[RMDB]
RNA sequence: GGGAACGACUCGAGUAGAGUCGAAAAGCUGGGCAACGAUCCGAGGGGACUGUCCCUCUCGAGAAUCGGCAAAUGGGGCCCCUCGCUCGUAUCUCCGAGAGGAGACGAGAAGGAGGUGGAUCUCCCUUACUCCAUAUCUUCGGAUAUGGAAAAAGAAACAACAACAACAAC
Reactivity to DMS in 0.01 (KOAc 150mM, MgCl2 10mM, bicine 150mM(pH8.5), 24C), signal-to-noise 9, nucleotides 027 to 129: g000c060u020g000g000g000c060a100a060c030g000a030u010c030c000g000a020g000g010g010g020a150c190u050g020u030c120c010c010u000c000u030c000g030a090g000a070a040u020c000g000g000c100a030a070a080u010g020g020g020g010c020c010c010c000u000c040g030c010u040c020g000u020a130u060c000u010c010c020g010a190g010a190g040g000a030g000a010c020g010a010g010a040a060g030g000a040g020g030u070g000g000a100u040c050u060c010c000c000u020u030a070c110
Reactivity to 2A3 in 0.01 (KOAc 150mM, MgCl2 10mM, bicine 150mM(pH8.5), 24C), signal-to-noise 9, nucleotides 027 to 129: g070c050u080g020g060g020c050a120a080c060g020a010u000c010c010g000a000g010g010g000g020a050c100u180g160u300c030c010c000u020c000u000c000g200a240g020a070a080u030c010g020g010c040a030a050a130u150g000g000g010g010c000c000c000c000u010c000g020c000u000c000g040u080a170u060c000u000c000c010g040a060g010a040g080g000a000g000a000c000g000a000g010a020a090g190g010a010g000g040u290g040g020a100u050c090u090c020c000c000u020u080a090c030